[RMDB]
RNA sequence: GGGAACGACUCGAGUAGAGUCGAAAAGGUGCAGCGGUGUGCCGGUAGUCGUACACCUGUUGGCUCAGAAGUUGCUGCUGAGGCGUCGGAAAGGCGCGUGUUAGGCGCUCCUAUUGGCGCCAAUGAAGCAUCUCGCUAGCUUCGGCUGGCGAGGUGCAAAAGAAACAACAACAACAAC
Reactivity to 2A3 in 0.01 (KOAc 150mM, MgCl2 10mM, bicine 150mM(pH8.5), 24C), signal-to-noise 5, nucleotides 027 to 126: g110g010u110g030c040a020g030c030g030g050u030g020u050g030c040c000g030g040u140a070g030u070c070g020u010a020c020a010c020c020u070g030u020u050g030g020c010u000c060a070g020a180a020g060u090u060g000c040u020g020c010u020g020a020g030g000c010g020u010c010g050g050a210a100a040g010g000c010g000c000g000u040g060u050u190a170g080g000c010g000c000u010c000c000u050a100u030u130g000g000c000g000c000c000a000a040u090g020a040a000
Reactivity to DMS in 0.01 (KOAc 150mM, MgCl2 10mM, bicine 150mM(pH8.5), 24C), signal-to-noise 5, nucleotides 027 to 126: g000g000u010g000c030a060g010c070g000g000u010g020u010g020c010c030g030g010u020a050g010u010c050g000u000a140c180a050c040c010u020g020u000u000g000g010c020u010c080a060g010a080a130g000u000u020g000c050u010g010c010u010g000a280g000g010c010g000u000c000g000g000a060a210a050g010g010c080g000c000g010u010g000u020u040a130g010g000c000g000c000u000c040c040u010a140u020u030g010g000c010g010c000c000a020a030u030g000a170a150
Conditions: 150 mM KOAc, 10 mM MgCl2 and 150 mM bicine (pH 8.5), 24 C. The record gives the reactivity of an RNA of 177 nucleotides to 2A3 and DMS. As a SHAPE reagent, 2A3 marks flexible, mostly unpaired nucleotides at the ribose 2'-OH. The 2A3 profile rests on 7,004 reads. The DMS profile rests on 14,677 reads.